[RMDB]
RNA sequence: GGGAACGACUCGAGUAGAGUCGAAAAGGGCAGUUUUAUUUGACGACGGAAAGGGAUGCAUAGUAUCCGAGCAUCCAGGAUACGUUCGUCGUCCGCCGUAGUUUUUUUAUUAUGGCGGUGCUGCCCAGGGCGCAGUCUUCUUCGGGAGGCUGUGCCCAAAAGAAACAACAACAACAAC
Reactivity to 2A3 in 0.01 (KOAc 150mM, MgCl2 10mM, bicine 150mM(pH8.5), 24C), signal-to-noise 9, nucleotides 027 to 126: g000g000g000c020a020g000u060u040u080u110a270u100u210u240g020a000c000g000a000c000g020g080a080a040a070g110g010g010a010u010g000c010a040u070a210g100u160a170u130c120c070g010a020g010c000a010u000c000c000a020g090g060a040u070a090c010g020u040u140c000g000u000c000g000u000c000c010g000c000c000g000u000a000g000u000u020u040u040u030u080u030a040u010u000a000u010g000g000c000g000g010u020g000c000u000g000c000c000c000a000
Reactivity to DMS in 0.01 (KOAc 150mM, MgCl2 10mM, bicine 150mM(pH8.5), 24C), signal-to-noise 8, nucleotides 027 to 126: g000g010g010c000a000g000u010u020u030u030a050u020u050u040g000a010c000g010a010c010g000g010a060a180a180g000g000g000a020u010g000c020a090u020a180g020u040a100u040c160c110g010a140g000c010a010u010c000c000a090g010g010a150u030a090c030g010u010u020c010g000u000c000g000u020c000c000g000c010c000g010u000a000g010u000u000u050u050u040u070u010a010u000u000a010u010g000g020c000g010g000u020g010c000u000g000c000c000c000a050
Annotation: This 177-nucleotide RNA was probed chemically with 2A3 and DMS. The reactions ran in a buffer of 150 mM KOAc, 10 mM MgCl2 and 150 mM bicine (pH 8.5), at 24 C. 2A3 adducts were read by reverse transcription with SuperScript II with manganese. For DMS, 40,490 sequencing reads were counted.